Description: The record gives the reactivity of an RNA of 177 nucleotides to 2A3 and DMS. DMS adducts were read by reverse transcription with MarathonRT. The RNA was probed in 150 mM KOAc, 10 mM MgCl2 and 150 mM bicine (pH 8.5) at 24 C. For DMS, 12,919 sequencing reads were counted. It was measured as part of the RMDB library OK1LIB.
RNA sequence: GGGAACGACUCGAGUAGAGUCGAAAAACUGUAGAAAAUCAAAAUUAACACCUGUGCGGUAAGACAGAAUGAUGGCAAUAAACAUGAGCACAUAACACAACAAACAGAAAGACAACGGCACAUCCACAAUAGGACAUGUAUUCGUACAUGUCCUAUUAAAAGAAACAACAACAACAAC
Reactivity to 2A3 in 0.01 (KOAc 150mM, MgCl2 10mM, bicine 150mM(pH8.5), 24C), signal-to-noise 7, nucleotides 027 to 126: a010c080u110g050u160a100g130a090a100a020a030u080c040a030a050a120a140u120u090a090a040c010a030c020c020u040g030u060g010c030g030g050u080a060a010g120a070c040a020g160a080a090u120g080a040u080g050g020c050a040a100u110a130a130a010c050a060u130g030a030g040c020a020c010a070u110a110a070c080a010c030a170a060c030a030a140a000c020a030g120a050a080a000g040a030c050a080a020c070g020g020c010a010c000a070u040c010c020a040c020
Reactivity to DMS in 0.01 (KOAc 150mM, MgCl2 10mM, bicine 150mM(pH8.5), 24C), signal-to-noise 6, nucleotides 027 to 126: a120c050u020g020u010a090g020a070a070a080a050u060c060a070a070a070a090u020u020a070a070c080a050c050c030u010g000u020g000c060g020g020u010a040a070g000a070c080a080g020a070a050u030g010a050u010g010g000c070a050a040u020a050a050a080c090a070u030g020a120g010c030a030c060a030u040a040a070c110a040c130a040a060c130a050a070a060c130a070g000a060a050a080g010a050c070a020a080c080g010g010c020a020c040a060u010c020c020a060c170